RNA sequence: GGGAACGACUCGAGUAGAGUCGAAAAGAUAUGGAUUCCCGGUGCGACUGAUGACCCACGGUCGGAAACGACCGUGGCAAGGUCCACCGGAAUCCUAAGUCAAAAGACUAACCUUCGGGUUAGUCAACCAUUAAGAUCGGUUCGCCGAUCUUAAUGGAAAAGAAACAACAACAACAAC
Reactivity to 2A3 in 0.01 (KOAc 150mM, MgCl2 10mM, bicine 150mM(pH8.5), 24C), signal-to-noise 2, nucleotides 027 to 126: g020a030u120a060u190g000g000a010u060u020c200c120c070g000g000u020g040c280g020a010c000u040g070a240u150g020a300c010c010c000a010c000g000g040u010c020g010g000a120a100a030c030g000a000c000c000g000u000g010g010c010a020a020g020g000u030c000c000a000c020c000g020g020a000a000u000c000c010u000a080a010g040u010c040a040a020a110a210g000a000c000u010a000a010c010c000u050u100c300g080g000g000u000u000a000g000u010c000a000a040
Reactivity to DMS in 0.01 (KOAc 150mM, MgCl2 10mM, bicine 150mM(pH8.5), 24C), signal-to-noise 3, nucleotides 027 to 126: g000a070u010a300u020g000g020a020u000u000c200c030c020g030g000u000g010c300g010a010c000u000g010a060u010g010a130c300c010c000a030c000g020g000u010c000g000g030a070a120a180c000g030a000c000c000g010u000g000g040c020a000a050g010g010u000c000c010a010c010c010g010g000a000a010u000c000c000u000a030a080g000u010c060a080a130a120a140g000a030c000u000a010a010c000c010u000u010c240g020g010g020u000u000a010g000u000c000a060a090
Conditions: 150 mM KOAc, 10 mM MgCl2 and 150 mM bicine (pH 8.5), 24 C. An RNA of 177 nucleotides, treated with 2A3 and DMS and read out base by base. It was measured as part of the RMDB library TTRDES. For 2A3, 5,037 sequencing reads were counted.